[RMDB]
RNA sequence: GGGAACGACUCGAGUAGAGUCGAAAACGCAGAGGGUUCUGAUAACAAAGAACCUAGAUAGCCGCAUCGGUAUUAUAGGAUGUAGUCGUUGAGCCGGAAUGCCUGCAUCGUAAGCCUAUAAGUAAAUUUAAGUGUAAUCACUUCGGUGAUUACACAAGAUCUAUAUAAUCUUCGGAUUAUAUAGAUCAAAAGAAACAACAACAACAAC
Reactivity to 2A3 in 0.01 (KOAc 150mM, MgCl2 10mM, bicine 150mM(pH8.5), 24C), signal-to-noise 6, nucleotides 027 to 156: c070g030c050a020g070a110g070g010g010u000u000c020u010g090a100u110a220a040c040a040a130a000g010a000a010c000c000u020a020g040a080u080a030g030c030c030g050c050a080u100c050g040g000u080a080u210u070a070u120a070g080g000a010u020g030u040a020g010u020c030g000u010u040g050a050g070c030c030g030g080a030a020u030g010c000c000u000g000c000a020u020c020g030u030a040a010g000c000c010u080a080u050a190a050g080u130a080a100a220u160u210u160a180a030g000u000g000u000a000a000u000c000a000c000u010u030c100g050g000u000g000a000u000u000a000c000a000c000a000a010
Reactivity to DMS in 0.01 (KOAc 150mM, MgCl2 10mM, bicine 150mM(pH8.5), 24C), signal-to-noise 2, nucleotides 027 to 156: c050g000c040a120g010a230g000g010g020u000u010c010u010g010a180u000a180a220c300a090a250a060g000a010a020c000c010u000a060g020a190u000a180g010c010c050g040c090a080u010c050g050g010u010a080u000u010a110u000a080g020g020a040u010g030u000a080g030u000c010g030u000u010g000a070g030c030c040g010g020a050a130u000g010c030c040u000g000c020a040u000c020g000u000a090a130g010c030c020u000a080u000a050a110g000u000a040a110a180u010u010u000a080a190g010u010g010u010a010a020u000c010a020c000u000u000c300g050g020u010g020a000u000u000a000c000a000c000a020a070
Source: RMDB library M2RFPK, as collected in RNAgym. Structure probing data (2A3 and DMS) for a 207-nucleotide construct. The RNA was probed in 150 mM KOAc, 10 mM MgCl2 and 150 mM bicine (pH 8.5) at 24 C. For 2A3 the reverse transcriptase was SuperScript II with manganese. Values cover nucleotides 27 to 156.